[RMDB]
RNA sequence: GGGAACGACUCGAGUAGAGUCGAAAAACACCUCAAUCCUCCUCGCCUCAGGAGUAUCCAUUACCUGAGCCCAUCACAGCCUAAUAGAAGGGGACCGAAAACACAUAAUCCAAGCACUAUCCAUCACCAUUGCACUAGGCGUAUACUUCACCCUCCUCUCUUUAUGUUCGUUCGCGAACAUAAAGAGAAAAGAAACAACAACAACAAC
Reactivity to 2A3 in 0.01 (KOAc 150mM, MgCl2 10mM, bicine 150mM(pH8.5), 24C), signal-to-noise 3, nucleotides 027 to 156: a000c030a090c000c020u080c050a050a140u060c000c010u010c010c020u050c040g050c010c000u040c010a010g000g040a040g040u030a110u090c080c030a070u090u100a090c000c010u010g020a000g010c010c020c000a080u070c010a010c020a060g060c010c010u170a170a090u110a160g070a080a060g000g010g010g030a000c010c050g060a070a070a110a010c080a010c010a070u130a100a030u090c070c020a040a020g060c020a020c070u050a050u010c040c020a020u050c030a030c040c000a070u030u150g030c030a020c070u010a010g030g000c010g020u060a030u030a090c030u040u080c040a080c010c000c030u020c030c000u000